This 177-nucleotide RNA was probed chemically with 2A3 and DMS. For 2A3, 1,179 sequencing reads were counted.
[RMDB]
RNA sequence: GGGAACGACUCGAGUAGAGUCGAAAAUAACACACGAGUUGCUUCACUGUAUGACAGUUUGCAUCCGGCGAUGCUACAAGUGUUGAGCCACAUUUUAACUCAGGCGACACAGUCUGGCCUGCAAGUGUCAUAGCCUAUCCUUCGGGAUAGGCUAUGAAAAAGAAACAACAACAACAAC
Reactivity to 2A3 in 0.01 (KOAc 150mM, MgCl2 10mM, bicine 150mM(pH8.5), 24C), signal-to-noise 1, nucleotides 027 to 126: u060a010a040c040a000c010a000c040g020a020g120u040u010g020c030u020u000c000a000c010u000g040u040a030u070g170a070c070a150g120u080u210u160g060c000a000u000c000c020g100g010c010g010a000u040g000c000u020a000c010a130a010g000u010g040u060u090g010a010g050c050c000a080c000a080u130u090u080u050a030a020c040u040c070a000g000g000c000g040a010c060a000c020a160g010u040c020u160g150g030c000c000u010g030c080a080a050g000u030g070
Reactivity to DMS in 0.01 (KOAc 150mM, MgCl2 10mM, bicine 150mM(pH8.5), 24C), signal-to-noise 2, nucleotides 027 to 126: u020a120a130c100a020c010a050c050g000a300g000u010u000g010c020u010u000c000a060c030u000g000u010a030u000g010a120c070a150g000u010u010u010g000c000a000u000c050c040g030g020c070g010a030u000g000c000u000a040c050a030a210g020u000g030u000u000g000a140g010c040c020a060c140a080u010u000u000u000a070a160c080u010c030a010g010g000c010g000a090c130a100c130a180g010u010c050u030g040g000c010c010u010g000c150a070a050g000u010g010

Reactivities are given for positions 27 through 126.